[RMDB]
RNA sequence: GGGAACGACUCGAGUAGAGUCGAAAAUGGUCGAAUGUUGGAGAGUCACGCAGCGGUGGAGACCUGCUCAGGGCCCCAGGCACUGCCUUACCCCAUUUGCCCAUCUGCAGGCCCUGUGCUCACAAAGAAACCCUCACUGGAGAGUGAGGCACCUGGCUAUGACAUUGAAGUUCGCUUCAAUGUCAUAAAAAGAAACAACAACAACAAC
Reactivity to DMS in 0.01 (KOAc 150mM, MgCl2 10mM, bicine 150mM(pH8.5), 24C), signal-to-noise 2, nucleotides 027 to 156: u010g030g030u010c010g030a120a030u000g030u000u140g010g000a150g000a130g020u010c030a090c060g010c020a070g020c050g050g050u000g030g010a140g010a080c070c020u000g000c060u010c020a090g030g010g010c010c030c060c060a100g010g020c010a040c070u000g010c000c040u000u010a130c050c040c010c040a230u000u000u000g010c020c020c000a040u010c060u010g020c080a110g030g000c030c000c010u000g000u000g000c010u000c030a150c060a050a050a120g000a130a080a130c140c000c010u000c020a070c040u020g000g050a240g010a010g030u020g010a010g040g020c020a010c020c020u000g010g030c120
Reactivity to 2A3 in 0.01 (KOAc 150mM, MgCl2 10mM, bicine 150mM(pH8.5), 24C), signal-to-noise 3, nucleotides 027 to 156: u100g010g000u030c020g040a080a050u080g020u040u070g070g010a090g010a040g050u030c020a030c110g040c040a030g030c030g060g000u050g000g050a050g040a050c010c030u020g010c030u030c040a010g010g000g010c010c000c010c000a010g040g000c040a050c220u100g020c000c030u070u120a120c020c010c010c020a040u060u070u080g030c000c020c000a080u050c070u100g020c080a040g000g030c010c010c000u000g000u000g020c020u020c030a100c030a030a120a020g100a070a050a040c010c000c010u000c010a010c010u020g040g050a120g000a000g080u000g000a010g000g000c000a030c000c030u040g020g000c010
An RNA of 207 nucleotides, treated with DMS and 2A3 and read out base by base. The data come from the RNA Mapping Database (RMDB), library OK3TST. The RNA was probed in 150 mM KOAc, 10 mM MgCl2 and 150 mM bicine (pH 8.5) at 24 C.